Source: RMDB library OK2TRN, as collected in RNAgym. Structure probing data (DMS and 2A3) for a 177-nucleotide construct. 2A3 adducts were read by reverse transcription with SuperScript II with manganese. The reactions ran in a buffer of 150 mM KOAc, 10 mM MgCl2 and 150 mM bicine (pH 8.5), at 24 C.

RNA sequence: GGGAACGACUCGAGUAGAGUCGAAAAGUACAACCUGAGCGAUCUCCCUAGCGAUGUGCUGAACGGAGAAAGGGAGGAAGACAAGAGCAACAGAUAUAUUCAAGAUGACAUGGAUGAGGAUAAAAAGCUACCAGUGAUUCUUCGGAAUCACUGGUAGAAAAGAAACAACAACAACAAC
Reactivity to DMS in 0.01 (KOAc 150mM, MgCl2 10mM, bicine 150mM(pH8.5), 24C), signal-to-noise 3, nucleotides 027 to 126: g030u020a050c090a090a140c020c020u000g020a110g030c000g010a140u020c010u000c020c010c000u010a080g020c010g000a250u020g020u010g030c170u000g050a120a020c070g000g000a260g000a020a100a040g000g010g000a040g000g000a070a090g010a100c080a060a030g000a120g010c070a030a040c200a070g020a080u000a070u000a040u000u000c060a070a090g000a080u000g000a050c080a070u010g000g000a050u020g000a050g000g010a130u030a050a070a060a100a100g030
Reactivity to 2A3 in 0.01 (KOAc 150mM, MgCl2 10mM, bicine 150mM(pH8.5), 24C), signal-to-noise 1, nucleotides 027 to 126: g070u050a030c010a080a050c040c000u060g000a030g010c010g020a030u020c010u060c050c030c000u000a030g070c010g050a080u090g060u080g110c030u110g040a060a000c010g020g000a010g000a060a020a000g040g000g000a030g020g040a070a010g030a020c010a060a000g030a030g090c030a010a060c020a020g100a070u070a020u000a060u200u180c050a090a060g040a140u110g000a040c030a050u100g000g000a020u030g020a020g120g000a030u080a130a260a020a000a000g040